Conditions: 150 mM KOAc, 10 mM MgCl2 and 150 mM bicine (pH 8.5), 24 C. This 207-nucleotide RNA was probed chemically with DMS and 2A3. 2A3 adducts were read by reverse transcription with SuperScript II with manganese. The 2A3 profile rests on 2,727 reads. Values cover nucleotides 27 to 156. It was measured as part of the RMDB library ARCHII.
[RMDB]
RNA sequence: GGGAACGACUCGAGUAGAGUCGAAAAAUUAAGGUGAUGGAACGUUGAUCUUGUCCAGAUGGCUGAGUCUAGUGUGAUGAAUUUCUGGCCCGCCCAUUCCAAGCCAAGAGCUGAGCUAUGUGACCCCAGCGAAGGCUUGGGCUACAUGUCUCCUAAACACUAUCAAUAUCUUCGGAUAUUGAUAGUGAAAAGAAACAACAACAACAAC
Reactivity to DMS in 0.01 (KOAc 150mM, MgCl2 10mM, bicine 150mM(pH8.5), 24C), signal-to-noise 2, nucleotides 027 to 156: a140u010u000a050a090g020g040u000g010a060u000g030g030a080a110c080g040u000u000g010a060u000c040u020u000g030u000c040c040a120g030a110u000g000g000c040u010g000a160g000u000c040u000a110g020u000g020u000g020a130u000g000a070a110u000u010u000c060u010g010g070c020c020c070g000c030c010c030a120u020u000c010c020a040a060g030c020c020a060a160g000a300g010c000u000g010a040g020c050u000a120u000g040u000g010a130c210c000c040c010a040g020c010g000a150a200g010g000c010u000u000g000g010g000c130u010a050c050a060u000g020u010c010u000c020c010u010a070a090a190
Reactivity to 2A3 in 0.01 (KOAc 150mM, MgCl2 10mM, bicine 150mM(pH8.5), 24C), signal-to-noise 4, nucleotides 027 to 156: a000u150u110a050a040g030g010u040g020a040u050g030g020a050a030c060g020u050u070g030a100u070c030u080u090g040u030c020c000a040g030a170u070g070g000c040u040g020a040g040u010c020u110a040g030u040g030u000g090a060u030g020a050a170u040u110u040c030u010g020g000c000c000c020g040c000c020c000a030u120u000c010c010a000a010g010c000c000a130a020g050a020g050c020u010g000a010g020c050u160a140u250g130u160g150a150c010c000c040c040a000g000c010g020a040a000g020g000c000u000u010g000g000g000c000u040a020c020a090u090g050u000c020u000c020c010u040a090a030a000